[RMDB]
RNA sequence: GGGAACGACUCGAGUAGAGUCGAAAAACGAGUCCGUACGCGGACUCGAAGGGCCCCAGAAGACCAAGGGGCCCAAACAUACCACUCAUUAGAUGCAUGGAAAUCACUAGGUGAUACGUCACCUAGAACACGCUUUUAAGCUUCGGCUUAAAAGCAACGUAAGAAGAUCGUUCGCGAUCUUCUUACGAAAAGAAACAACAACAACAAC
Reactivity to 2A3 in 0.01 (KOAc 150mM, MgCl2 10mM, bicine 150mM(pH8.5), 24C), signal-to-noise 2, nucleotides 027 to 156: a000c000g000a000g000u010c020c010g000u020a030c260g040c010g100g000a000c000u010c000g000a000a000g000g010g000c020c000c000c000a110g100a300a050g040a080c020c080a050a120g000g000g000g040c000c000c010a000a000a020c010a000u140a050c030c000a050c030u130c000a080u080u170a100g050a080u120g040c080a080u110g080g080a080a110a130u150c040a090c060u000a000g000g000u000g010a030u020a030c220g060u010c010a000c000c000u000a010g000a010a050c070a020c140g000c000u050u020u000u000a000a000g000c000u030u110c220g090g000c000u000u000a000a010a000a000g020c000a000a000